RNA sequence: GGGAACGACUCGAGUAGAGUCGAAAAUCGUUCUUGAGACACCACUUUCUUAUGACUGUGUUUCUAACUUACUUUGUGUGAGGACAUCGGUAGAUGGGCAGUUCGGCUGGGGCGGCACGGGCUUGAAGACUUCAUAUGUGUUCGCACAUAUGAAGUCAAAAGAAACAACAACAACAAC
Reactivity to DMS in 0.01 (KOAc 150mM, MgCl2 10mM, bicine 150mM(pH8.5), 24C), signal-to-noise 2, nucleotides 027 to 126: u000c030g000u000u000c010u000u000g010a090g010a020c080a050c070c110a090c070u000u010u020c060u000u010a120u020g010a080c090u000g020u020g010u000u000u000c060u010a060a120c070u000u000a020c050u000u010u000g020u030g030u000g000a050g020g000a070c020a030u000c070g040g010u000a060g010a040u000g000g000g010c010a080g030u000u000c080g010g010c040u000g000g000g010g010c050g000g000c050a050c120g000g000g010c070u010u000g010a080a080
Reactivity to 2A3 in 0.01 (KOAc 150mM, MgCl2 10mM, bicine 150mM(pH8.5), 24C), signal-to-noise 2, nucleotides 027 to 126: u020c010g010u010u000c010u020u090g040a040g000a010c020a020c040c020a080c050u100u190u000c050u100u230a130u200g060a070c070u030g000u000g030u120u010u000c050u030a070a120c010u050u070a020c010u080u140u160g090u050g010u020g080a030g000g030a010c010a060u030c060g050g020u040a090g020a120u040g000g010g030c020a060g000u040u060c010g020g000c020u040g010g000g020g020c050g000g000c010a010c060g000g020g000c030u040u050g040a120a000